Annotation: Source: RMDB library OK2TST, as collected in RNAgym. This 177-nucleotide RNA was probed chemically with 2A3 and DMS. The 2A3 profile rests on 872 reads. The reactions ran in a buffer of 150 mM KOAc, 10 mM MgCl2 and 150 mM bicine (pH 8.5), at 24 C.
RNA sequence: GGGAACGACUCGAGUAGAGUCGAAAAUCUGAUAAACAAAGGGAAUGCUUUGUAAAACAGCACUUGUUUCCUAAAGGUUCCUCAUACACUUAUGGUCAUUUAAAUGGUUUGUGAACAUGAAUACUGAGCAUCAUAAUCGUUUCGACGAUUAUGAUGCAAAAGAAACAACAACAACAAC
Reactivity to 2A3 in 0.01 (KOAc 150mM, MgCl2 10mM, bicine 150mM(pH8.5), 24C), signal-to-noise 2, nucleotides 027 to 126: u060c000u040g010a040u150a040a130a100c030a020a040a050g050g000g270a070a260u180g040c010u080u020u000g010u040a000a090a080a090c010a030g010c030a030c070u060u100g080u060u070u020c010c030u060a120a080a030g030g000u000u000c020c000u020c000a020u040a030c060a010c010u070u050a060u200g090g040u030c000a040u050u060u170a130a140a060u090g090g080u000u040u070g040u020g050a000a050c050a080u090g090a090a000u110a150c040u090g040a020
Reactivity to DMS in 0.01 (KOAc 150mM, MgCl2 10mM, bicine 150mM(pH8.5), 24C), signal-to-noise 3, nucleotides 027 to 126: u010c020u000g010a040u020a100a190a050c040a010a020a040g020g020g040a140a160u000g000c010u000u010u010g010u030a060a130a070a170c040a020g010c230a050c090u000u020g000u010u000u000c010c020u000a040a110a150g000g000u010u000c040c000u000c090a070u010a090c170a090c090u000u000a020u010g000g000u010c050a040u010u020u010a050a070a090u010g000g020u010u000u000g000u010g000a050a050c020a020u020g020a080a030u010a070c130u020g000a240